[RMDB]
RNA sequence: GGGAACGACUCGAGUAGAGUCGAAAACACAUCAUCAGGCGAACAAAUGGAAAGGUAAUAAAUAAUUGCUCCUAACGCCCACUUUAAAAUAGUAAAACCAAAUGGAACAGUGAAGUGAGCCGGUCUUCACUGCUCUGAGCAGGAAGCGUGCUAGCGACGAAAAUGCUAAUUUCGAUUAGCAUUUUCGAAAAGAAACAACAACAACAAC
Reactivity to DMS in 0.01 (KOAc 150mM, MgCl2 10mM, bicine 150mM(pH8.5), 24C), signal-to-noise 1, nucleotides 027 to 156: c070a020c100a020u020c030a080u030c020a100g030g050c060g050a080a140c090a130a070a030u010g040g000a090a140a100g000g030u000a040a160u000a080a070a130u010a190a150u000u000g010c000u010c040c010u020a000a120c070g000c050c020c010a070c050u000u000u000a000a040a120a130u030a080g000u010a030a010a070a170c040c050a010a030a070u000g010g000a020a030c030a020g030u000g000a010a030g030u010g000a140g030c050c000g000g020u010c010u010u050c000a020c010u000g000c030u000c030u000g010a000g080c100a030g000g010a050a060g000c070g050u000g020c080u000a070g030c010g030a150
Reactivity to 2A3 in 0.01 (KOAc 150mM, MgCl2 10mM, bicine 150mM(pH8.5), 24C), signal-to-noise 2, nucleotides 027 to 156: c070a010c000a040u070c000a020u020c060a050g000g010c040g010a110a080c070a080a080a110u160g020g040a100a060a030g070g000u090a070a050u090a090a240a050u210a050a100u120u050g020c010u010c030c000u030a080a020c000g000c010c060c000a020c020u050u140u150a080a140a040a080u170a050g010u060a010a040a010a070c020c020a020a040a090u190g010g010a040a000c010a020g000u020g010a020a000g030u040g030a020g010c020c020g060g020u010c010u010u000c030a040c020u000g000c000u020c010u070g040a020g000c030a010g020g020a040a000g020c000g020u030g030c040u050a040g060c000g070a020